[RMDB]
RNA sequence: GGGAACGACUCGAGUAGAGUCGAAAAUGUAGGUCCUUCUGGGUCUGGUAAAAGUACGAUAUUUAAUCUGAUAGAACGUAUGUAUGAAAUUGAGUCAGGUGAUAUUAAAUAUGGCCUUGAAAGUGUCAAUAUGCGGAAUGUUCGCAUUCCGCAUAUUAAAAGAAACAACAACAACAAC
Reactivity to 2A3 in 0.01 (KOAc 150mM, MgCl2 10mM, bicine 150mM(pH8.5), 24C), signal-to-noise 2, nucleotides 027 to 126: u210g030u010a130g000g060u070c000c000u040u000c080u060g090g000g010u000c080u110g050g000u070a000a000a000a200g160u120a030c060g000a020u000a080u090u040u090a070a070u090c020u020g000a000u030a060g060a110a000c080g040u110a030u160g120u090a200u250g120a140a110a090u060u240g040a050g110u000c000a000g000g010u030g030a000u030a010u120u000a000a210a000u100a080u090g000g000c000c000u000u000g120a120a060a010g070u090g050u030c020
Reactivity to DMS in 0.01 (KOAc 150mM, MgCl2 10mM, bicine 150mM(pH8.5), 24C), signal-to-noise 4, nucleotides 027 to 126: u040g010u010a060g010g030u010c000c010u000u010c060u010g000g010g030u000c010u010g000g050u030a040a060a130a160g000u010a050c190g000a030u000a040u010u010u050a080a010u000c050u000g020a030u010a130g000a050a090c150g000u010a070u050g020u010a050u010g020a050a090a160u040u020g010a260g000u000c000a030g000g020u020g000a040u000a040u000u020a020a040a120u010a050u010g010g000c060c020u000u000g000a080a030a040g010u010g010u010c070
The data come from the RNA Mapping Database (RMDB), library OK1LIB.
This 177-nucleotide RNA was probed chemically with 2A3 and DMS.
DMS adducts were read by reverse transcription with MarathonRT.
The reactions ran in a buffer of 150 mM KOAc, 10 mM MgCl2 and 150 mM bicine (pH 8.5), at 24 C.
Reactivities are rounded to 0.1 and cut off at 0 and 3.
Values cover nucleotides 27 to 126.